[RMDB]
RNA sequence: GGGAACGACUCGAGUAGAGUCGAAAAAAAAAACACUAGAGCUGACAACUAGCUGCAGUGAGCAGCAGCACACAAGCUGAGCUAGGUGGGAGCUGCGCUGAGCAGCACCACAGCCAUCAGCAAAAAAACACAUAGACCAGUUCGCUGGUCUAUGUGUAAAAGAAACAACAACAACAAC
Reactivity to DMS in 0.01 (KOAc 150mM, MgCl2 10mM, bicine 150mM(pH8.5), 24C), signal-to-noise 1, nucleotides 027 to 126: a020a060a050a010a050a050c080a030c020u000a100g000a100g010c020u000g000a070c080a080a160c040u010a050g020c040u000g010c000a070g050u020g000a100g030c000a040g010c020a040g000c010a150c200a030c200a110a170g000c000u000g000a080g000c010u000a040g030g020u000g000g000g000a110g030c010u000g000c030g000c240u000g000a240g010c000a000g020c000a070c000c010a000c010a010g020c070c190a060u000c020a000g020c000a000a020a020a180a020a060

Conditions: 150 mM KOAc, 10 mM MgCl2 and 150 mM bicine (pH 8.5), 24 C. This 177-nucleotide RNA was probed chemically with DMS. For DMS, 604 sequencing reads were counted.